[RMDB]
RNA sequence: GGGAACGACUCGAGUAGAGUCGAAAAGGCCCUGGUGCUGGAGAGGGAUGGGCCACGCUGCCGCCUGGUGCUACCUGCUGCUCAGCCCGAGGACGGGGGCGAGUUUGUAUGUGAUGCUGGAGAUGACCGGAUAGGUAGUUUUCGAACUACCUAUCCGAAAAGAAACAACAACAACAAC
Reactivity to 2A3 in 0.01 (KOAc 150mM, MgCl2 10mM, bicine 150mM(pH8.5), 24C), signal-to-noise 2, nucleotides 027 to 126: g060g010c020c040c000u020g050g080u090g000c040u020g040g000a080g030a050g050g060g030a070u090g060g020g000c030c010a020c030g020c000u050g050c010c020g000c030c020u050g020g010u090g010c010u050a080c020c020u050g020c040u020g000c000u020c060a060g000c010c040c010g000a090g020g050a040c050g050g000g030g000g020c030g000a040g000u050u210u100g090u050a180u090g050u020g060a040u080g020c040u030g040g020a070g010a080u080g060a050c010
Reactivity to DMS in 0.01 (KOAc 150mM, MgCl2 10mM, bicine 150mM(pH8.5), 24C), signal-to-noise 4, nucleotides 027 to 126: g020g010c020c010c020u000g020g010u000g000c040u000g010g010a080g020a130g010g000g010a100u000g000g000g010c030c040a060c120g010c040u000g030c080c060g010c050c040u000g020g020u000g010c040u000a110c060c030u000g000c050u000g000c030u010c050a130g020c020c010c020g030a130g000g010a090c090g000g020g000g010g020c050g010a040g010u000u000u000g000u000a060u000g000u000g000a070u000g010c040u000g010g000a070g010a120u010g010a160c160
Chemical mapping of a 177-nucleotide RNA with 2A3 and DMS.
The DMS profile rests on 8,270 reads.
For 2A3 the reverse transcriptase was SuperScript II with manganese.
Values cover nucleotides 27 to 126.
Source: RMDB library OK2TRN, as collected in RNAgym.
The reactions ran in a buffer of 150 mM KOAc, 10 mM MgCl2 and 150 mM bicine (pH 8.5), at 24 C.